[RMDB]
RNA sequence: GGGAACGACUCGAGUAGAGUCGAAAACAAGAAAAACGACUCUUGUCGGACCUACUUGAUCAAAAGAGUGGGAAAACCCCGGAAUCACGUAGACCCACUUGGGACCGAGUAUUGCAAUUAUUGGUCGCGCAACGAGGAAUGUCUCGUAGGCGCAGCUGUCGGAAAAAUAGUUCGCUAUUUUUCCGACAAAAGAAACAACAACAACAAC
Reactivity to 2A3 in 0.01 (KOAc 150mM, MgCl2 10mM, bicine 150mM(pH8.5), 24C), signal-to-noise 2, nucleotides 027 to 156: c020a040a150g140a090a080a050a000a000c010g030a040c030u020c010u030u040g010u000c010g000g010a000c000c020u010a020c000u020u040g030a040u060c020a030a120a140a050g020a020g000u080g000g010g000a060a050a010a060c080c050c030c000g140g030a100a180u200c080a030c090g010u070a020g050a070c000c010c030a030c000u020u020g020g030g020a010c030c000g010a020g000u070a090u060u280g060c030a010a030u200u060a130u140u230g060g010u150c060g000c000g000c050a060a020c010g000a000g030g050a300a220u250g110u130c000u000c000g010u010a070g140g000c000g000c010a000g030c030u020